[RMDB]
RNA sequence: GGGAACGACUCGAGUAGAGUCGAAAAAGCUGCUCAGUAUACGUACUGAGCAGCAAGGGGUUGAAGCGGACACCCCUUCAGGCGCGCGCCCAAGCUCCGUACGCCUCCUCAUACGUGAGGCGGCGAAAUAGGUGUAUCUGGUUCGCCAGAUACACAAGAUCAUGAGAUUCUUCGGAAUCUCAUGAUCAAAAGAAACAACAACAACAAC
Reactivity to DMS in 0.01 (KOAc 150mM, MgCl2 10mM, bicine 150mM(pH8.5), 24C), signal-to-noise 1, nucleotides 027 to 156: a120g040c000u000g000c000u000c000a010g000u000a060u010a140c300g020u010a040c000u000g010a020g020c020a020g000c020a020a000g010g020g020g070u000u020g020a040a130g000c000g000g000a200c050a050c010c000c010c020u000u010c070a100g000g040c030g040c040g020c070g050c000c020c010a070a200g010c000u000c020c010g030u000a200c060g040c010c010u000c000c000u000c090a180u010a080c190g040u000g000a050g000g040c050g030g020c000g010a030a080a180u010a150g000g010u000g040u000a000u000c000u000g000g010u000u010c300g010c020c000a040g010a000u000a000c000a000c000a050a080
Reactivity to 2A3 in 0.01 (KOAc 150mM, MgCl2 10mM, bicine 150mM(pH8.5), 24C), signal-to-noise 3, nucleotides 027 to 156: a000g000c000u010g000c000u010c000a000g000u000a010u010a060c160g020u000a010c010u000g000a000g000c010a000g000c000a000a000g020g000g000g000u020u090g210a200a020g020c000g000g000a010c000a000c000c020c000c000u040u170c040a010g000g000c030g010c040g060c040g030c100c010c020a020a010g030c110u000c000c010g010u020a080c020g010c010c000u020c010c000u010c010a030u020a100c270g120u060g000a000g000g000c000g000g000c000g050a050a010a020u230a060g070g050u000g000u000a000u000c000u000g000g030u060u020c060g050c080c010a000g020a000u010a000c000a000c000a000a020